Structure probing data (2A3 and DMS) for a 207-nucleotide construct. For 2A3, 1,827 sequencing reads were counted. DMS adducts were read by reverse transcription with MarathonRT. Source: RMDB library OK3TST, as collected in RNAgym.
RNA sequence: GGGAACGACUCGAGUAGAGUCGAAAACAGUCUCAACAUCAGGACAGUCCUCGAUGAUCUCAAGUCCAAUUGUGCCUUGUCCUGCCAUAACAGCUUUAUCAUCGAAUGCAUGCACAUACGUCUGUCUAGAUUCCUCAGCGAGUUGAUGUGCAUACGCGAUGGUUCCCAUUUUCGAAUGGGAACCAUCAAAAGAAACAACAACAACAAC
Reactivity to 2A3 in 0.01 (KOAc 150mM, MgCl2 10mM, bicine 150mM(pH8.5), 24C), signal-to-noise 4, nucleotides 027 to 156: c030a030g080u000c010u040c070a040a100c090a180u180c050a030g010g140a040c010a040g120u070c030c010u030c040g060a050u040g010a020u040c040u080c150a110a070g040u070c020c020a090a070u120u080g030u090g060c000c010u010u080g020u070c000c010u010g010c040c030a080u070a140a110c010a050g010c010u090u120u080a050u100c050a030u060c030g120a160a030u160g040c030a010u020g000c010a010c000a000u100a080c090g100u030c050u060g030u020c030u070a050g000a270u160u100c030c050u070c100a020g000c040g060a050g080u070u160g170a030u010g010u050g000c010a000u030a090c090g010c070
Reactivity to DMS in 0.01 (KOAc 150mM, MgCl2 10mM, bicine 150mM(pH8.5), 24C), signal-to-noise 1, nucleotides 027 to 156: c090a220g000u000c000u010c040a050a190c100a210u020c020a070g000g000a040c020a150g040u000c030c000u010c040g000a030u000g010a080u000c040u030c140a080a190g040u000c060c040a100a180u020u000g060u010g040c000c040u040u000g020u000c030c020u000g000c000c010a140u010a060a140c140a080g030c040u000u000u010a060u000c010a050u000c000g000a110a160u020g040c050a040u020g020c040a060c000a000u000a130c060g010u000c010u020g030u000c030u030a130g010a210u000u000c030c020u000c080a120g040c030g000a130g030u030u000g040a090u000g010u000g000c010a060u010a030c000g010c110